[RMDB]
RNA sequence: GGGAACGACUCGAGUAGAGUCGAAAAACCCUGAAAUCGGUUUGUCCGGAGCUAGGGUUUCAUGGCCGGCAGAGCCCCGCACCUUUGCGGGGUCCGGUGCGCUCCUGACGACCCUUGAAAAUCCGCGCUCAAUAAGAAAGUUCGCUUUCUUAUUGAGAAAAGAAACAACAACAACAAC
Reactivity to 2A3 in 0.01 (KOAc 150mM, MgCl2 10mM, bicine 150mM(pH8.5), 24C), signal-to-noise 3, nucleotides 027 to 126: a010c010c000c010u020g110a090a090a030u120c040g020g070u010u080u300g030u110c000c030g030g000a020g000c040u110a080g100g150g040u120u160u110c100a100u100g070g010c020c000g000g040c080a050g030a040g230c020c000c010c010g010c000a080c050c140u150u300u250g010c000g000g000g010g000u000c000c000g010g010u030g000c050g000c000u010c000c020u000g000a000c000g000a010c000c010c000u050u040g020a020a040a020a120u070c060c030g060c000g000
Reactivity to DMS in 0.01 (KOAc 150mM, MgCl2 10mM, bicine 150mM(pH8.5), 24C), signal-to-noise 4, nucleotides 027 to 126: a060c000c000c010u000g000a080a120a050u010c150g010g010u000u010u020g020u000c020c070g010g010a050g010c030u010a100g010g020g010u010u010u000c080a080u000g000g010c150c020g010g000c300a060g000a190g010c000c010c010c000g020c040a120c300c180u010u000u010g010c040g000g000g010g020u000c010c000g020g020u000g020c050g010c020u020c010c020u000g000a010c040g010a040c010c000c070u010u000g000a070a060a140a100u000c080c110g010c290g010

Chemical mapping of a 177-nucleotide RNA with 2A3 and DMS. For DMS, 2,436 sequencing reads were counted. Conditions: 150 mM KOAc, 10 mM MgCl2 and 150 mM bicine (pH 8.5), 24 C.